Record summary: This 207-nucleotide RNA was probed chemically with DMS and 2A3.
RNA sequence: GGGAACGACUCGAGUAGAGUCGAAAAAAAAUCAAAACAGCUAUCACAUCAUAGGUUCCUUGUUGACUUAUUUCAUGGGGAUCUGGAAUAAGUUCUGGGUGAUUAUGGCUUCCUUUUUAGAGCUCAGUUCAAAAGAUGAGCAGUUUCAGGGUAGGAGACGUCUUUAAGUAUUCGUACUUAAAGACGUAAAAGAAACAACAACAACAAC
Reactivity to DMS in 0.01 (KOAc 150mM, MgCl2 10mM, bicine 150mM(pH8.5), 24C), signal-to-noise 2, nucleotides 027 to 156: a040a040a030a050u010c050a070a060a060a090c060a100g010c050u010a070u000c030a100c040a120u000c060a120u000a090g040g000u000u010c010c010u000u000g030u000u000g010a070c020u000u010a030u000u000u000c020a060u000g030g010g020g010a070u000c060u000g020g000a020a010u000a020a040g010u000u000c070u000g030g010g040u000g000a110u000u000a050u010g020g000c050u000u000c030c000u000u000u000u000u000a070g010a150g010c000u000c010a020g010u000u000c070a090a070a080a160g010a100u000g020a030g010c000a050g000u000u000u000c020a080g020g020g020u000a070g040g020a190g000
Reactivity to 2A3 in 0.01 (KOAc 150mM, MgCl2 10mM, bicine 150mM(pH8.5), 24C), signal-to-noise 4, nucleotides 027 to 156: a000a000a000a010u090c050a030a040a020a060c050a020g000c020u060a030u100c040a020c020a070u100c030a060u090a100g070g030u040u080c020c000u050u050g060u070u090g020a010c000u010u020a030u020u070u020c020a040u110g020g000g000g080a060u030c030u030g010g020a020a020u030a040a000g010u050u020c040u040g040g000g020u030g030a060u050u110a030u090g020g000c000u050u100c000c000u080u110u040u060u160a130g020a010g110c000u000c010a040g000u190u080c060a120a110a050a000g060a070u050g000a010g000c020a000g000u000u030u040c020a000g000g050g010u050a030g000g060a050g000